RNA sequence: GGGAACGACUCGAGUAGAGUCGAAAAACAUAGGUUGGGCCUUAGGCGCUGCGGUUCAUCAUCUUGCCCUCGCCAGGACCGCUCCCGUUCUACUACUUGGCGUCGCGGAUACCGGGUUGGAAAACAAAUCUCAACCAUGAUUCGUCAUGGUUGAGAUAAAAGAAACAACAACAACAAC
Reactivity to DMS in 0.01 (KOAc 150mM, MgCl2 10mM, bicine 150mM(pH8.5), 24C), signal-to-noise 3, nucleotides 027 to 126: a070c090a090u000a070g040g000u000u000g010g010g020c000c040u000u000a100g020g010c020g010c220u010g010c090g010g000u000u010c080a060u000c110a040u000c070u000u010g020c010c020c010u000c030g030c010c040a090g000g000a060c050c030g020c050u000c010c010c020g000u010u010c110u000a120c090u010a060c070u000u010g010g010c060g020u000c060g020c050g020g040a070u000a090c000c040g000g000g020u010u000g000g000a070a090a100a060c140a060a090
Reactivity to 2A3 in 0.01 (KOAc 150mM, MgCl2 10mM, bicine 150mM(pH8.5), 24C), signal-to-noise 1, nucleotides 027 to 126: a010c090a060u300a060g060g170u050u060g060g000g010c000c020u070u120a150g060g000c000g030c150u050g000c020g030g040u080u090c000a080u040c000a020u050c090u120u150g000c000c000c000u000c010g000c000c010a030g000g070a060c000c040g040c010u000c000c000c000g040u040u070c090u120a170c010u000a020c020u010u050g050g030c000g010u050c040g000c040g080g050a050u020a120c010c010g040g040g040u000u140g040g030a020a080a030a080c100a000a180